[RMDB]
RNA sequence: GGGAACGACUCGAGUAGAGUCGAAAAGAAUCCUAUUCGCUCCUGAUAGGAGAAAUUCUAUAUUGCUUAUAUAUGUGCUUACGCACAUAUAUAAAUGCUCAUGCAAAACUGCAUGAAUGCCCCUAAGCACUUGCGCGUAAUUCGUUACGCGCAAGUGAAAAGAAACAACAACAACAAC
Reactivity to 2A3 in 0.01 (KOAc 150mM, MgCl2 10mM, bicine 150mM(pH8.5), 24C), signal-to-noise 4, nucleotides 027 to 126: g010a030a010u020c020c010u030a040u020u130c080g040c070u040c020c060u140g050a050u050a010g020g020a020g050a050a120a010u060u040c030u020a150u030a110u190u250g010c010u000u000a000u000a000u000a000u010g010u000g010c050u170u180a070c110g000c000a000c000a000u000a000u000a000u000a000a010a000u130g000c000u000c030a020u000g000c020a030a030a290a300c180u060g000c000a000u010g040a050a030u110g050c020c000c010c020u060a130a000g050
Reactivity to DMS in 0.01 (KOAc 150mM, MgCl2 10mM, bicine 150mM(pH8.5), 24C), signal-to-noise 1, nucleotides 027 to 126: g000a060a010u000c010c010u000a000u000u010c050g000c020u020c040c090u010g010a040u000a020g010g000a000g000a050a130a130u000u040c030u000a150u000a100u020u010g000c080u000u000a020u000a000u000a020u000g000u000g020c030u010u050a100c210g010c000a030c000a000u000a000u000a000u010a000a060a090u010g000c020u000c020a010u020g010c000a060a060a160a140c300u000g010c010a000u000g000a050a050u020g020c000c000c000c040u020a080a080g010